[RMDB]
RNA sequence: GGGAACGACUCGAGUAGAGUCGAAAAGAUAUGGACCACAUUUCCAGGGAGCAACAGCUUCGCGUAACAUCGGAUCGGAAACGAUCCGUGGCGAAGACAUGCUCCCGGAGGAUGUGGUCCUAAGUCACGCAAAACAAUAGUUCGCUAUUGUUUUGCGAAAAGAAACAACAACAACAAC
Reactivity to DMS in 0.01 (KOAc 150mM, MgCl2 10mM, bicine 150mM(pH8.5), 24C), signal-to-noise 3, nucleotides 027 to 126: g020a070u000a300u000g000g010a010c010c000a010c000a010u010u020u000c000c020a220g050g020g000a020g010c010a050a070c300a220g000c010u000u000c000g030c000g000u000a050a180c250a030u010c010g000g010a000u010c000g010g010a140a060a170c010g010a000u010c000c000g060u020g000g010c000g030a000a010g000a030c170a180u000g010c000u000c000c000c000g000g000a020g010g000a000u000g020u000g010g010u000c000c000u000a010a050g000u010c040a300
Reactivity to 2A3 in 0.01 (KOAc 150mM, MgCl2 10mM, bicine 150mM(pH8.5), 24C), signal-to-noise 2, nucleotides 027 to 126: g050a000u070a030u190g000g000a010c020c010a000c010a000u020u030u000c020c090a270g010g030g000a000g010c030a040a170c070a180g050c000u020u020c010g000c000g110u150a150a020c040a210u300c080g000g000a000u010c020g000g050a110a030a040c020g000a000u000c020c010g000u000g010g000c000g010a000a010g050a050c050a050u090g000c000u000c000c010c000g020g000a000g000g000a000u000g000u000g000g010u020c000c010u000a000a010g000u000c000a000
Structure probing data (DMS and 2A3) for a 177-nucleotide construct. The reactions ran in a buffer of 150 mM KOAc, 10 mM MgCl2 and 150 mM bicine (pH 8.5), at 24 C. For 2A3, 4,312 sequencing reads were counted. Reactivities are rounded to 0.1 and cut off at 0 and 3. DMS adducts were read by reverse transcription with MarathonRT.